RNA sequence: GGGAACGACUCGAGUAGAGUCGAAAACAAGAUCCCCUCCUUCGGGGACAUACCCCACGACUUCCGCGUGUCCCUUCUAGGAAAGCCCAACACAGAGGUAGAGACGGUGUACAGCUCCAAGGGCGUGUCAGACGAGGUAAUUCGUUACCUCGUCUGAAAAAGAAACAACAACAACAAC
Reactivity to DMS in 0.01 (KOAc 150mM, MgCl2 10mM, bicine 150mM(pH8.5), 24C), signal-to-noise 3, nucleotides 027 to 126: c150a070a120g020a180u000c010c000c000c080u010c080c110u010u010c130g030g040g010g000a040c070a090u000a170c030c010c000c050a120c110g000a120c060u020u000c050c050g010c110g040u000g020u000c020c030c010u010u020c080u010a080g000g010a080a070a150g010c010c010c030a100a090c150a070c090a080g010a040g010g010u000a050g010a120g020a080c020g000g010u000g010u000a050c080a090g020c020u000c030c060a080a070g030g000g000c030g000u020g020
This 177-nucleotide RNA was probed chemically with DMS.